[RMDB]
RNA sequence: GGGAACGACUCGAGUAGAGUCGAAAAAGACGUCAAGGCUAAGGACGUACUUGACGUGUGCGACGGUCCCUUUGAGACAAACUGUGUUCUCUUCGAUGAAGUUGUCCUUGAGUGUGUAAUAAGAACUUUUGACACUCCUUAUUGGGACUGCAUUCAGACAUGGCAUGGUUUUCGAACCAUGCCAUGUAAAAGAAACAACAACAACAAC
Reactivity to DMS in 0.01 (KOAc 150mM, MgCl2 10mM, bicine 150mM(pH8.5), 24C), signal-to-noise 1, nucleotides 027 to 156: a070g000a020c010g010u020c000a020a030g000g000c060u000a070a070g020g030a170c050g020u000a070c010u000u000g010a030c000g000u010g050u000g000c080g000a080c040g000g000u020c010c000c000u000u000u000g000a050g000a080c040a090a080a140c090u000g010u000g010u000u000c030u010c060u000u000c060g030a190u040g020a030a110g020u000u000g000u000c000c050u000u000g000a070g040u020g010u000g030u010a100a070u000a120a080g000a090a070c160u000u000u020u010g000a040c040a020c050u000c010c120u000u000a050u040u000g020g020g000a060c050u020g070c000a090u000u000c040a140g010
Reactivity to 2A3 in 0.01 (KOAc 150mM, MgCl2 10mM, bicine 150mM(pH8.5), 24C), signal-to-noise 2, nucleotides 027 to 156: a000g170a010c010g000u000c000a000a000g010g020c010u160a100a210g230g020a120c040g090u140a300c000u010u000g000a000c000g000u000g020u030g030c120g070a080c010g000g000u050c000c000c000u000u020u030g020a000g000a000c070a000a120a000c030u060g010u030g040u220u060c110u000c000u130u130c100g050a150u080g070a000a000g020u040u010g000u040c000c030u000u100g040a060g000u010g000u010g100u150a010a120u080a230a060g040a160a050c000u070u010u160u280g000a000c010a000c000u010c050c050u260u300a220u100u110g000g000g000a000c000u100g000c010a050u060u100c000a010g010